This 177-nucleotide RNA was probed chemically with DMS.

RNA sequence: GGGAACGACUCGAGUAGAGUCGAAAAGAAAAGUAGCGAAAGACGACGAAACGUACCCCGCCAAGAAAGUCGUCGAAAAUCAGCGAGGUACGAGCUGAUGAAAGGCGGAAAGCUACGAAAGAAACAAGGGUUCAUACUUCUUCGGAAGUAUGAACCCAAAAGAAACAACAACAACAAC
Reactivity to DMS in 0.01 (KOAc 150mM, MgCl2 10mM, bicine 150mM(pH8.5), 24C), signal-to-noise 1, nucleotides 027 to 126: g000a000a090a080a170g000u000a000g010c000g000a150a080a030g000a030c000g000a000c000g040a090a040a080c110g000u160a300c120c090c000c050g070c000c000a000a000g000a130a090a130g000u000c000g000u010c000g000a130a050a210a030u000c000a000g000c000g010a210g000g070u000a060c210g000a050g000c000u000g000a000u010g000a190a170a020g000g050c000g000g000a170a020a280g000c000u000a000c050g020a060a120a090g000a290a030a170c000a010a030
The RNA was probed in 150 mM KOAc, 10 mM MgCl2 and 150 mM bicine (pH 8.5) at 24 C.